[RMDB]
RNA sequence: GGGAACGACUCGAGUAGAGUCGAAAACGAGCUUGAGCUGCGAGCCGAGAGGCGAUCUCGUAAACACGCACUUAAAUAUAACUGGCAAAACUAACAGUUUUAACCAAAACGUAGCAUUAGCUGCCUAAUAAGCGCAGCGAGCUCUUCCUGACAUUGCCAUUGUAGUUACCUUCGGGUAACUACAAUGAAAAGAAACAACAACAACAAC
Reactivity to DMS in 0.01 (KOAc 150mM, MgCl2 10mM, bicine 150mM(pH8.5), 24C), signal-to-noise 2, nucleotides 027 to 156: c110g020a060g050c020u010u000g000a130g020c020u010g000c010g010a200g060c160c010g010a170g000a110g030g050c090g020a110u000c030u000c080g010u010a100a090a120c060a070c070g010c010a140c130u000u000a020a100a070u000a080u000a060a120c090u020g010g040c060a030a080a080a090c020u000a030a110c050a190g000u000u000u000u000a060a230c150c060a060a050a080a050c040g050u000a050g020c020a110u000u000a100g040c050u010g020c010c050u010a040a100u000a070a060g020c030g000c000a080g000c030g010a050g020c010u000c000u000u000c010c000u000g010a120c170a080u010u000g000c040
Reactivity to 2A3 in 0.01 (KOAc 150mM, MgCl2 10mM, bicine 150mM(pH8.5), 24C), signal-to-noise 6, nucleotides 027 to 156: c060g000a000g020c010u030u100g090a010g010c000u010g000c010g010a020g100c100c010g000a010g010a000g000g010c010g090a180u030c010u000c020g300u240a000a030a020c010a010c010g020c010a090c130u190u220a030a220a020u210a070u080a130a070c080u040g040g010c040a040a060a040a120c050u090a070a040c010a050g000u010u010u030u070a060a060c050c030a050a030a000a000c040g040u040a010g010c010a040u070u050a030g000c020u020g000c000c000u100a190a150u160a290a020g060c040g000c010a000g010c000g000a000g000c000u000c000u010u000c000c000u020g030a040c020a160u120u140g020c020